[RMDB]
Source information
Chemical mapping of a 170-nucleotide RNA with 2A3 and DMS. Conditions: 150 mM KOAc, 10 mM MgCl2 and 150 mM bicine (pH 8.5), 24 C. For DMS, 4,148 sequencing reads were counted. In probing experiments dimethyl sulfate is read out at A N1 and C N3, which are open when not base-paired. Source: RMDB library 15KLIB, as collected in RNAgym.

RNA sequence: GGGAACGACUCGAGUAGAGUCGAAAAUCCCCUCGUUCUCUUGCAGAACUUUGAUUUUAACGAACUUAAAUAAAAGCCCUGUUGUUUAGCGUAUCGUUGCACUUGUCUGGUGGGAUUGUGGCAUUAAAAAACCCGAGGUUCGCCUCGGGUAAAAGAAACAACAACAACAAC
Reactivity to 2A3 in 0.01 (KOAc 150mM, MgCl2 10mM, bicine 150mM(pH8.5), 24C), signal-to-noise 2, nucleotides 027 to 129: u030c040c000c000c000u000c070g020u000u010c030u000c040u090u210g060c010a000g000a000a130c000u060u050u100g130a120u000u000u000u220a050a040c030g010a000a000c020u130u150a100a010a000u080a080a070a100a000g000c070c040c040u000g120u110u030g000u140u020u000a000g000c000g030u090a000u230c000g020u030u110g020c000a000c010u030u020g030u060c010u010g000g000u090g020g260g000a080u000u100g000u010g000g000c030a000u000u050a010a040a040a150a000
Reactivity to DMS in 0.01 (KOAc 150mM, MgCl2 10mM, bicine 150mM(pH8.5), 24C), signal-to-noise 2, nucleotides 027 to 129: u050c050c000c000c110u020c100g000u030u010c000u000c030u060u010g050c100a150g000a130a060c050u000u000u090g040a180u000u060u080u030a060a110c120g000a180a140c010u060u050a010a010a160u070a200a070a040a050g050c010c040c040u060g050u010u040g110u010u010u010a030g050c060g010u050a060u000c040g040u020u020g050c110a060c020u000u000g000u060c050u020g050g020u000g000g010g050a070u020u000g030u030g010g050c050a000u030u070a030a000a040a050a060